[RMDB]
RNA sequence: GGGAACGACUCGAGUAGAGUCGAAAAGAUCUGCUUCUUGGAUGGAGUUUCCAUUUUAGGGAAUCGGGGGAUCCGCCCAAAAUUCUCACAUCUUUCGAAUAGAAAGAGGAGAGUUGGGGGACCUCCCCGGCCUCCCGAAUGGAGAAAUCUCCAACAACGUUCAAUAGUUGUUCGCAACUAUUGAACGAAAAGAAACAACAACAACAAC
Reactivity to 2A3 in 0.01 (KOAc 150mM, MgCl2 10mM, bicine 150mM(pH8.5), 24C), signal-to-noise 1, nucleotides 027 to 156: g040a160u050c030u080g020c050u070u030c020u060u070g110g080a100u030g000g000a080g000u000u030u030c000c020a020u050u020u010u210a080g000g000g000a000a030u080c000g000g000g000g000g000a020u020c040c020g300c150c040c080a070a160a040a100u110u030c000u010c010a110c040a240u020c020u040u010u020c040g080a150a160u070a300g000a000a010a020g000a010g020g000a000g000a010g010u000u000g020g010g000g000g000a000c010c020u070c020c000c000c040g000g040c000c080u000c010c000c010g000a000a000u000g000g010a020g090a020a220a050u060c000u000c020c000a010a020c000a010a010